[RMDB]
RNA sequence: GGGAACGACUCGAGUAGAGUCGAAAAGUCGUAGUUCGGAUUGCGGAUUGAAACUCAUCCGCAUGAAGCUGGAUUCGGUAGUAAUCGCGCCUCAGAAGGGCGCGGUGAAUACGUCCCUGCUCCUUGCACGAGUAGGAAAGUUCGCUUUCCUACUCGUAAAAGAAACAACAACAACAAC
Reactivity to 2A3 in 0.01 (KOAc 150mM, MgCl2 10mM, bicine 150mM(pH8.5), 24C), signal-to-noise 1, nucleotides 027 to 126: g040u020c020g070u090a000g000u090u240c020g000g020a030u010u010g010c030g000g030a000u030u210g130a260a180a080c130u070c090a030u000c000c000g000c000a000u000g030a010a000g000c030u030g000g010a040u060u040c030g040g000u060a010g000u000a010a040u010c010g000c000g010c030c000u080c040a160g060a290a050g070g000g000c000g000c000g000g010u000g010a000a010u100a090c010g000u000c010c000c000u000g020c030u060c000c000u030u060g000c050
Reactivity to DMS in 0.01 (KOAc 150mM, MgCl2 10mM, bicine 150mM(pH8.5), 24C), signal-to-noise 2, nucleotides 027 to 126: g000u000c010g050u010a030g030u000u020c020g010g010a120u000u000g010c000g000g010a020u000u000g020a090a160a240c300u000c060a030u010c000c010g010c000a010u000g000a290a100g000c020u010g020g010a020u010u000c060g020g020u000a050g000u000a140a000u000c010g010c010g030c000c000u010c020a200g000a230a300g000g000g010c000g030c000g000g000u000g000a220a170u000a030c000g000u000c020c010c000u000g010c030u010c060c030u000u010g050c300
Conditions: 150 mM KOAc, 10 mM MgCl2 and 150 mM bicine (pH 8.5), 24 C. The record gives the reactivity of an RNA of 177 nucleotides to 2A3 and DMS. Reactivities are given for positions 27 through 126. The data come from the RNA Mapping Database (RMDB), library RFMREP. In probing experiments dimethyl sulfate is read out at A N1 and C N3, which are open when not base-paired.